[RMDB]
The record gives the reactivity of an RNA of 177 nucleotides to 2A3 and DMS. The reactions ran in a buffer of 150 mM KOAc, 10 mM MgCl2 and 150 mM bicine (pH 8.5), at 24 C. For 2A3 the reverse transcriptase was SuperScript II with manganese. Source: RMDB library OK1LIB, as collected in RNAgym.

RNA sequence: GGGAACGACUCGAGUAGAGUCGAAAAUUACAUAAGUCUAACACCUUGUUUCGGACUAACAAGGGCGUAUGGAGGAUGGCCGGACCUCCAUAGUUAGACGUCCGAGAACCAGCCGAAAUGAAAAAGAAAUGAUGAUACUCUUCGGAGUAUCAUCAUUAAAAGAAACAACAACAACAAC
Reactivity to 2A3 in 0.01 (KOAc 150mM, MgCl2 10mM, bicine 150mM(pH8.5), 24C), signal-to-noise 6, nucleotides 027 to 126: u180u130a090c080a090u190a100a060g010u000c010u000a010a000c010a020c030c000u000u020g060u060u080u150c190g140g080a130c100u060a010a010c000a010a010g000g000g030c050g120u160a010u000g000g000a000g010g010a030u120g000g020c000c000g030g040a150c000c000u000c000c000a000u000a000g000u000u010a010g000a010c000g010u000c020c030g070a060g010a060a020c010c010a020g040c020c020g050a070a020a070u200g040a080a060a060a010a020g240a030
Reactivity to DMS in 0.01 (KOAc 150mM, MgCl2 10mM, bicine 150mM(pH8.5), 24C), signal-to-noise 4, nucleotides 027 to 126: u030u050a170c170a110u030a100a070g000u000c010u000a020a040c020a090c030c020u000u000g010u000u010u020c130g030g030a100c130u010a020a020c030a000a030g010g010g030c130g040u020a030u000g000g000a010g010g000a080u020g020g020c000c030g000g000a280c000c000u010c000c000a000u010a020g020u000u020a030g000a040c020g000u030c010c010g000a140g000a070a130c050c040a110g050c020c000g010a040a060a040u030g000a060a050a060a080a090g010a080